Notes
An RNA of 177 nucleotides, treated with 2A3 and read out base by base. Values cover nucleotides 27 to 126. It was measured as part of the RMDB library RFM100. The reactions ran in a buffer of 150 mM KOAc, 10 mM MgCl2 and 150 mM bicine (pH 8.5), at 24 C. For 2A3, 1,263 sequencing reads were counted.
RNA sequence: GGGAACGACUCGAGUAGAGUCGAAAAUCGUUCUUUCCGACCCAUACAAGGUUCCGCUGCCUGCAUUGUUCCAAGAGUGUCUUGGACAAAAGCAGGAAGUGGAACCUUGUUAAGGUCGGAACGAACUGGCUACUCGCAUUUUCGAAUGCGAGUAGCCAAAAGAAACAACAACAACAAC
Reactivity to 2A3 in 0.01 (KOAc 150mM, MgCl2 10mM, bicine 150mM(pH8.5), 24C), signal-to-noise 1, nucleotides 027 to 126: u190c020g010u000u000c000u000u020u000c000c000g000a000c000c020c000a040u050a020c010a000a000g000g020u000u000c000c000g020c000u000g130c000c000u050g000c000a090u010u030g070u210u050c000c010a030a000g020a010g110u240g130u160c030u000u000g000g010a010c000a000a000a000a000g000c020a000g000g010a000a000g000u000g000g030a000a000c000c000u000u000g000u000u000a010a000g000g000u010c000g000g000a000a000c000g000a000a000c000u000